[RMDB]
RNA sequence: GGGAACGACUCGAGUAGAGUCGAAAAACCUUAUUUUGAGAAGCUGAGGGAUUUGGCCCAUAAAAGCUUCAGCAACCGACUUUAAAUAGCACGGUGCUAAUACCAACGAGCAACUCGAAUGAUAAGUAAAACGUUGACAAGUUCGCUUGUCAACGAACGAGGUAAUUUACUUCGGUAAAUUACCUCGAAAAGAAACAACAACAACAAC
Reactivity to 2A3 in 0.01 (KOAc 150mM, MgCl2 10mM, bicine 150mM(pH8.5), 24C), signal-to-noise 2, nucleotides 027 to 156: a000c050c000u080u080a300u020u080u060u150g080a080g000a020a040g000c000u050g010a070g070g000g000a120u120u080u170g080g000c020c050c010a010u180a040a170a000a000g000c000u050u050c010a000g000c000a010a020c000c000g040a020c000u010u060u230a070a290a300u080a140g000c030a010c050g060g000u020g000c010u000a000a050u040a100c000c000a040a080c070g050a040g020c080a090a050c030u010c070g030a230a000u110g100a050u020a260a000g090u090a010a200a020a020c000g000u000u000g000a000c000a000a000g000u080u120c110g040c230u010u020g000u000c000a000a000c000g000a040a000